Chemical mapping of a 177-nucleotide RNA with 2A3 and DMS. It was measured as part of the RMDB library OK2TRN. High 2A3 reactivity points to a flexible backbone, as in loops and unpaired stretches.
RNA sequence: GGGAACGACUCGAGUAGAGUCGAAAAGGAUCCACUCACAGGAUUGUCUCUGUGUUCCGAAACUCCAACAGUAUUGCUUCGGGACACCUACAGCAAUACUGUAGGUAUAGAGAGUAGGAGUGGAUCGACCUUUUACCUGGUUCGCCAGGUAAAAGGUAAAAGAAACAACAACAACAAC
Reactivity to 2A3 in 0.01 (KOAc 150mM, MgCl2 10mM, bicine 150mM(pH8.5), 24C), signal-to-noise 5, nucleotides 027 to 126: g110g000a000u000c000c000a010c010u020c000a220c020a050g180g090a240u220u220g130u040c000u000c000u020g040u000g040u080u000c010c000g000a030a010a020c070u110c100c040a110a070c030a160g110u140a110u090u150g040c020u010u020c010g020g000g020a040c020a050c000c000u010a010c020a010g040c030a050a150u050a280c000u000g000u000a000g000g010u040a060u180a060g050a010g010a010g050u070a050g000g070a010g010u000g000g000a000u000c020g010
Reactivity to DMS in 0.01 (KOAc 150mM, MgCl2 10mM, bicine 150mM(pH8.5), 24C), signal-to-noise 5, nucleotides 027 to 126: g020g010a010u000c000c000a000c000u000c010a140c090a140g010g020a200u010u010g010u000c030u000c000u000g000u000g020u010u010c000c010g010a030a040a070c030u010c180c070a110a120c210a140g000u000a160u000u000g010c060u000u000c130g010g000g000a040c210a090c010c020u000a020c050a020g020c050a100a080u010a300c000u000g010u000a000g010g000u010a070u000a010g000a030g000a060g000u000a090g010g010a030g020u000g000g010a000u000c000g000
DMS adducts were read by reverse transcription with MarathonRT.